An RNA of 177 nucleotides, treated with 2A3 and DMS and read out base by base. For DMS, 3,010 sequencing reads were counted. It was measured as part of the RMDB library M2PK90. The reactions ran in a buffer of 150 mM KOAc, 10 mM MgCl2 and 150 mM bicine (pH 8.5), at 24 C. 2A3 adducts were read by reverse transcription with SuperScript II with manganese. In probing experiments dimethyl sulfate is read out at A N1 and C N3, which are open when not base-paired. Reactivities are given for positions 27 through 126.
RNA sequence: GGGAACGACUCGAGUAGAGUCGAAAAUCAUUGGCUUCGCUGCGCGCUGCGUUGCCUAGGCUUCAGAUGCUUCGUACUGUAGCCAACGUUGCAAUUUCCAAACGCUAAUGCGAAAGUGUGCAAACAAGCGUUAUCAAAGAUUCGUCUUUGAUAACGCAAAAGAAACAACAACAACAAC
Reactivity to 2A3 in 0.01 (KOAc 150mM, MgCl2 10mM, bicine 150mM(pH8.5), 24C), signal-to-noise 5, nucleotides 027 to 126: u120c040a030u020u120g000g010c000u010u000c010g020c050u090g000c020g000c010g000c020u010g000c010g020u030u020g010c000c000u010a050g000g020c000u020u020c020a030g040a210u110g080c060u140u180c100g080u090a090c010u030g000u010a000g010c010c010a010a030c070g040u040u090g010c030a060a090u000u040u040c020c000a050a050a020c020g010c040u150a210a040u230g000c020g030a010a010a020g020u030g010u000g010c010a020a060a090c040a120a040
Reactivity to DMS in 0.01 (KOAc 150mM, MgCl2 10mM, bicine 150mM(pH8.5), 24C), signal-to-noise 4, nucleotides 027 to 126: u000c110a150u010u010g010g020c020u000u000c020g010c040u000g010c070g020c060g010c030u000g010c070g030u010u000g000c000c000u010a110g000g000c010u000u000c000a040g020a150u000g020c140u000u020c120g010u000a150c040u000g000u000a030g000c000c020a050a100c210g000u010u010g010c110a060a130u000u000u000c050c020a070a100a130c060g010c030u010a080a140u010g040c020g000a050a050a040g030u000g010u000g020c030a130a080a090c260a080a090